[RMDB]
Structure probing data (DMS and 2A3) for a 177-nucleotide construct. It was measured as part of the RMDB library TTRDEL. DMS adducts were read by reverse transcription with MarathonRT.

RNA sequence: GGGAACGACUCGAGUAGAGUCGAAAAGAUAUGGACACAAGCGAUAAGAUGGGUAUCGGAAACGAUACAUAUCUUUUGACGCUUGGUCCUAAGUCAAAACUAGUCGCCACUUCGGUGGCGACUAGAACCUUAUAAGAUGCUUCGGCAUCUUAUAAGGAAAAGAAACAACAACAACAAC
Reactivity to DMS in 0.01 (KOAc 150mM, MgCl2 10mM, bicine 150mM(pH8.5), 24C), signal-to-noise 2, nucleotides 027 to 126: g010a030u000a300u000g000g000a030c010a130c000a000a020g030c000g030a210u000a010a010g000a010u010g010g000g030u000a000u010c000g000g010a090a060a170c000g000a010u000a000c000a030u010a020u020c000u010u000u010u000g010a190c040g020c000u010u000g010g010u000c000c000u000a010a070g010u000c030a090a060a120a140c000u000a010g020u010c000g020c000c000a030c000u000u020c210g040g030u000g000g030c030g030a010c000u010a000g000a050a100
Reactivity to 2A3 in 0.01 (KOAc 150mM, MgCl2 10mM, bicine 150mM(pH8.5), 24C), signal-to-noise 1, nucleotides 027 to 126: g020a020u040a020u130g020g000a020c090a000c020a300a000g020c000g070a080u090a280a080g000a010u040g010g000g070u000a010u000c000g030g000a070a030a010c010g000a000u010a010c000a000u020a010u010c000u050u210u100u140g180a070c010g010c000u000u000g000g000u000c000c000u010a120a010g040u010c030a030a000a110a160c000u000a010g030u000c010g060c040c020a020c030u050u070c200g070g040u000g000g030c000g010a000c000u010a000g000a000a010
Source information: The reactions ran in a buffer of 150 mM KOAc, 10 mM MgCl2 and 150 mM bicine (pH 8.5), at 24 C.